Source: RMDB library TTRDEL, as collected in RNAgym. Chemical mapping of a 177-nucleotide RNA with DMS. Values are in units of 0.01, from 0 to 300, in steps of 10. For DMS the reverse transcriptase was MarathonRT. The RNA was probed in 150 mM KOAc, 10 mM MgCl2 and 150 mM bicine (pH 8.5) at 24 C. For DMS, 688 sequencing reads were counted.
RNA sequence: GGGAACGACUCGAGUAGAGUCGAAAAGAUAUGGAAGGUGGAGCAUGUAAGCACGUUGAAAUCGGAAACGAUGGAGUGUAUCAUGCCAAUCACCUUCCUAAGUCAAACGCUUCCUUCGGGAAGCGAAUCAUCUGAAGUCCUUCGGGACUUCAGAUGAAAAAGAAACAACAACAACAAC
Reactivity to DMS in 0.01 (KOAc 150mM, MgCl2 10mM, bicine 150mM(pH8.5), 24C), signal-to-noise 1, nucleotides 027 to 126: g010a030u000a300u000g000g000a000a020g000g000u000g000g000a120g000c000a000u000g000u030a070a300g020c000a000c000g020u020u000g030a090a160a020u000c020g000g000a030a070a170c010g030a000u010g010g020a180g000u020g040u000a300u000c010a000u000g010c000c090a130a110u010c000a020c010c000u000u000c000c000u000a030a060g000u000c050a070a100a280c000g000c020u000u000c000c000u000u000c130g060g000g010a020a000g020c010g000a010a040